RNA sequence: GGGAACGACUCGAGUAGAGUCGAAAAGGCAAAAACGGGACCAUUCGGGCGGUGAGGAAUGGAGAUAUGUCCGCCAAUGAAACGAUCCUGUGUAUUCCUCAAACGGCGUGCCUGCGCUCGAUAUUGAUAUCCGGUCAUACUUCGGUAUGACCGGAUAAAAAGAAACAACAACAACAAC
Reactivity to DMS in 0.01 (KOAc 150mM, MgCl2 10mM, bicine 150mM(pH8.5), 24C), signal-to-noise 2, nucleotides 027 to 126: g000g010c080a050a090a060a170a060c030g000g000g020a030c050c010a150u000u000c040g000g020g010c000g010g030u000g000a160g020g010a090a070u000g000g000a110g010a100u000a040u000g000u010c000c000g020c000c030a090a120u000g000a050a010a050c130g000a030u000c010c010u010g010u030g000u000a170u000u000c000c000u020c180a110a070a140c080g030g010c050g000u000g040c010c030u000g070c030g000c000u000c010g010a090u000a120u010u010g000a190
Source: RMDB library OK2TST, as collected in RNAgym. Chemical mapping of a 177-nucleotide RNA with DMS. For DMS, 1,261 sequencing reads were counted. High DMS reactivity at an A or C suggests that its Watson-Crick edge is free.